[RMDB]
RNA sequence: GGGAACGACUCGAGUAGAGUCGAAAAGACUCUGGGCCCACCUUGGUGGUCCUGCUGGCUGGGACAUAGGGUACAGCGUGGGCUAGCCCUGCCUUGUACAGGGGUUUUGAGGCAGAGUUGGAAUUUGAGCCAAGUCUUUAAGGAUUGGGGAGAUUCCUCAAAGACUACUAUUCGUAGUAGUCUUUGAAAAAGAAACAACAACAACAAC
Reactivity to 2A3 in 0.01 (KOAc 150mM, MgCl2 10mM, bicine 150mM(pH8.5), 24C), signal-to-noise 3, nucleotides 027 to 156: g040a000c000u020c030u040g020g060g010c000c000c010a020c000c030u090u150g130g050u080g030g040u060c010c000u020g040c040u060g100g020c050u050g000g000g030a020c020a090u180a080g070g010g030u150a060c060a020g020c040g090u080g020g020g000c020u010a040g010c020c000c000u010g020c000c030u060u120g070u110a060c050a070g020g000g000g010u050u070u140u180g070a070g010g050c010a000g010a010g020u010u060g010g020a050a030u090u060u100g010a030g050c000c010a070a090g090u020c000u050u200u150a110a030g050g000a020u030u030g010g000g000g010a050g030a040u010u030c000c000
Reactivity to DMS in 0.01 (KOAc 150mM, MgCl2 10mM, bicine 150mM(pH8.5), 24C), signal-to-noise 2, nucleotides 027 to 156: g010a040c000u000c030u000g020g010g020c020c000c010a090c040c050u000u000g010g020u010g020g010u000c010c000u010g020c040u000g020g050c090u010g040g010g010a060c050a140u000a090g000g010g050u000a090c050a050g020c060g010u000g000g000g050c040u010a070g020c030c010c000u000g030c020c030u000u010g000u010a080c010a060g000g020g010g010u000u000u010u000g010a100g040g020c010a120g000a090g010u010u000g010g010a070a110u000u000u010g010a300g030c030c020a020a090g010u000c000u000u000u000a120a170g040g000a060u000u010g010g000g000g030a300g010a160u010u000c010c010
Chemical mapping of a 207-nucleotide RNA with 2A3 and DMS. The RNA was probed in 150 mM KOAc, 10 mM MgCl2 and 150 mM bicine (pH 8.5) at 24 C. Values cover nucleotides 27 to 156. It was measured as part of the RMDB library OK3TST. The DMS profile rests on 5,723 reads.